[RMDB]
RNA sequence: GGGAACGACUCGAGUAGAGUCGAAAAUUUGGCGAUAGCAGCGACCAAUUGGUAUUGAUUCAUGAUGACGCUGUCGAAAUCGGACAGGUUCGUAUCGAACUGCUCCAUGGUUUCAUCAGUACCAAUAUCACAACCCAAGAUUCGUCUUGGGUUGUGAAAAAGAAACAACAACAACAAC
Reactivity to 2A3 in 0.01 (KOAc 150mM, MgCl2 10mM, bicine 150mM(pH8.5), 24C), signal-to-noise 2, nucleotides 027 to 126: u090u050u130g090g000c060g020a030u070a090g060c080a020g050c040g030a080c020c030a030a040u010u020g010g000u000a020u000u030g040a030u110u080c010a020u090g090a060u120g020a070c090g010c100u040g010u060c020g000a070a020a060u140c040g010g020a020c010a070g260g000u060u030c020g000u090a140u150c020g020a080a060c000u010g000c060u030c020c020a070u070g020g060u020u110u030c030a040u010c000a000g000u010a010c010c000a000a010u080a040
Reactivity to DMS in 0.01 (KOAc 150mM, MgCl2 10mM, bicine 150mM(pH8.5), 24C), signal-to-noise 2, nucleotides 027 to 126: u000u000u030g000g000c050g010a110u000a090g010c070a060g010c040g030a220c070c060a090a030u000u000g010g020u000a020u000u000g000a020u000u070c080a080u000g000a100u030g020a090c110g030c030u010g010u010c050g000a010a070a070u000c010g000g010a140c070a100g000g010u000u000c000g010u020a130u010c040g000a020a040c000u000g020c180u000c000c020a020u000g020g000u010u000u000c100a050u000c000a020g000u000a000c000c000a010a020u000a120
Structure probing data (2A3 and DMS) for a 177-nucleotide construct. Source: RMDB library OK2TST, as collected in RNAgym. Conditions: 150 mM KOAc, 10 mM MgCl2 and 150 mM bicine (pH 8.5), 24 C. In probing experiments dimethyl sulfate is read out at A N1 and C N3, which are open when not base-paired. The DMS profile rests on 2,169 reads. 2A3 adducts were read by reverse transcription with SuperScript II with manganese.